[RMDB]
RNA sequence: GGGAACGACUCGAGUAGAGUCGAAAAAAUGCCGCCUCAGUUCCAAGCUCUUUCGUGGCACUGUAAACAGUCCUAUUGAGUUAGGGGCAGUCAACAACGUUGCGAAGCUAAAUUAUCUGGUCGAGAGUUACGAUUCCCUACUUCGGUAGGGAAUCAAGACGAGUACCUGAUUCGUCAGGUACUCGUCAAAAGAAACAACAACAACAAC
Reactivity to 2A3 in 0.01 (KOAc 150mM, MgCl2 10mM, bicine 150mM(pH8.5), 24C), signal-to-noise 1, nucleotides 027 to 156: a000a010u060g050c010c010g010c000c000u050c020a070g010u020u000c020c000a040a020g000c020u020c010u070u120u100c110g060u090g030g000c080a000c000u100g000u130a000a040a250c020a010g030u000c010c010u040a120u210u040g050a080g030u030u050a030g000g030g030g000c000a000g060u020c010a030a060c000a020a060c030g000u010u040g040c030g050a010a040g020c010u080a080a120a100u140u100a040u030c020u090g070g000u030c000g000a000g000a030g210u060u020a070c080g000a000u010u000c000c000c000u000a000c000u000u040c000g080g000u000a000g000g000g010a000a000u000c000a000a000